Overview:
Structure probing data (DMS and 2A3) for a 177-nucleotide construct. For DMS, 1,753 sequencing reads were counted. Source: RMDB library RFM100, as collected in RNAgym.

[RMDB]
RNA sequence: GGGAACGACUCGAGUAGAGUCGAAAACGGGGUAAUUUUAUUUGGUAGCGAGAGGUGACAAUCGAUGACCUACCAAGGAGGACCGGAGGCGAAAGCGAUUACCAAGAACUGAUCUGACGAUCAAGCAUAAAGUCAGUGCAUUCGUGCACUGACUUUAAAAAGAAACAACAACAACAAC
Reactivity to DMS in 0.01 (KOAc 150mM, MgCl2 10mM, bicine 150mM(pH8.5), 24C), signal-to-noise 2, nucleotides 027 to 126: c040g020g000g020g000u020a000a010u040u030u060u030a110u030u000u000g000g020u000a000g000c080g010a020g030a050g000g010u010g000a070c240a040a190u000c010g000a100u050g010a090c300c000u000a000c000c000a050a000g000g000a140g030g030a110c070c060g000g000a060g000g010c100g050a040a010a100g000c010g000a050u030u000a080c110c030a030a040g000a160a120c090u000g010a000u000c000u000g000a150c260g010a010u000c020a030a120g010c170a100
Reactivity to 2A3 in 0.01 (KOAc 150mM, MgCl2 10mM, bicine 150mM(pH8.5), 24C), signal-to-noise 1, nucleotides 027 to 126: c060g000g010g000g040u030a000a030u070u050u080u240a090u010u010u010g020g000u000a020g000c000g020a040g000a010g040g000u300g000a050c000a000a060u000c000g230a250u000g000a000c000c000u000a000c020c000a010a010g020g000a000g000g050a000c030c010g000g000a010g160g000c000g040a070a030a000g040c000g040a000u030u020a010c040c050a010a010g020a040a080c100u060g000a000u040c000u030g060a020c110g020a010u070c000a000a000g020c050a040